This 207-nucleotide RNA was probed chemically with 2A3 and DMS. For 2A3 the reverse transcriptase was SuperScript II with manganese. For 2A3, 1,007 sequencing reads were counted. In probing experiments dimethyl sulfate is read out at A N1 and C N3, which are open when not base-paired. Conditions: 150 mM KOAc, 10 mM MgCl2 and 150 mM bicine (pH 8.5), 24 C.
RNA sequence: GGGAACGACUCGAGUAGAGUCGAAAAGCCAUGAGUCGCAACGCAAAGCCGCGGCAAGUGGAGUUAGCGAGAAGAGACUAGGCUUUGGUUUCUUCAAGUGAAUCGGUCACCAAUCAGGUGUGGUAGUAGGAGCCUGCAUGGUUCGCCAUGCAGGCAAUGUCCUUUUUAAGUUCGCUUAAAAAGGACAAAAAGAAACAACAACAACAAC
Reactivity to 2A3 in 0.01 (KOAc 150mM, MgCl2 10mM, bicine 150mM(pH8.5), 24C), signal-to-noise 1, nucleotides 027 to 156: g030c000c000a030u060g020a010g010u010c010g020c000a070a100c050g060c190a190a200a080g050c080c070g000c030g030g000c020a060a000g000u020g010g010a060g020u100u070a020g000c010g000a030g010a070a000g030a030g000a030c010u060a030g130g140c030u090u140u110g020g000u030u000u000c010u000u030c020a040a020g020u020g110a030a020u110c040g050g020u060c020a020c040c000a050a140u180c030a110g000g020u060g030u070g080g020u090a050g020u000a050g100g220a010g010c000c000u000g010c000a000u000g030g000u030u020c040g010c090c000a010u000g000c000a000g050g000c000a000a000
Reactivity to DMS in 0.01 (KOAc 150mM, MgCl2 10mM, bicine 150mM(pH8.5), 24C), signal-to-noise 2, nucleotides 027 to 156: g010c000c020a040u000g010a300g010u000c000g040c000a020a060c010g020c030a110a120a300g000c010c010g010c020g020g020c020a040a300g000u000g000g000a130g000u000u010a190g010c000g010a300g000a040a040g000a020g010a020c010u000a060g040g020c160u010u000u000g010g000u000u000u000c000u000u000c000a030a300g000u000g010a070a050u010c040g040g000u000c030a070c010c020a100a130u000c120a120g050g000u000g020u000g020g010u000a080g020u000a100g010g000a160g020c000c000u060g000c030a020u000g020g030u000u010c300g020c010c000a020u010g030c010a020g020g000c000a010a000